Source information: Conditions: 150 mM KOAc, 10 mM MgCl2 and 150 mM bicine (pH 8.5), 24 C. Chemical mapping of a 177-nucleotide RNA with 2A3 and DMS. Values cover nucleotides 27 to 126. For DMS the reverse transcriptase was MarathonRT.
RNA sequence: GGGAACGACUCGAGUAGAGUCGAAAAGAUAUGGAUCAUCUCGCGAUAAGAAUGUUGUCGGAAACGACAAAUUCUUUUGACGCGAGGUCCUAAGUCAAACUCUAUGCCCCUUCGGGGGCAUAGAGAACAUGGCAACUGUGUUCGCACAGUUGCCAUGAAAAGAAACAACAACAACAAC
Reactivity to 2A3 in 0.01 (KOAc 150mM, MgCl2 10mM, bicine 150mM(pH8.5), 24C), signal-to-noise 1, nucleotides 027 to 126: g050a020u090a040u160g030g030a030u050c030a270u070c110u020c030g070c000g070a100u090a240a020g020a010a000u220g100u300u010g010u080c000g000g060a060a090a060c010g030a000c030a010a050a000u010u000c010u070u040u050u170g150a050c040g000c010g000a010g010g000u000c000c000u090a170a040g080u000c020a040a000a250c010u000c010u000a000u010g020c000c000c000c000u020u110c290g170g000g040g000g000c030a000u000a000g000a000g000a000a000
Reactivity to DMS in 0.01 (KOAc 150mM, MgCl2 10mM, bicine 150mM(pH8.5), 24C), signal-to-noise 1, nucleotides 027 to 126: g010a030u000a290u000g010g000a040u010c160a160u010c000u000c010g020c000g020a130u000a010a000g000a000a000u020g010u010u000g050u000c010g000g000a040a060a220c000g020a000c000a000a010a040u010u010c000u010u000u000u020g020a180c040g000c000g020a020g030g000u000c000c000u000a060a220g010u000c020a090a110a130c000u000c000u000a000u000g000c000c000c000c000u000u000c240g070g000g010g000g000c000a000u000a000g000a010g010a040a130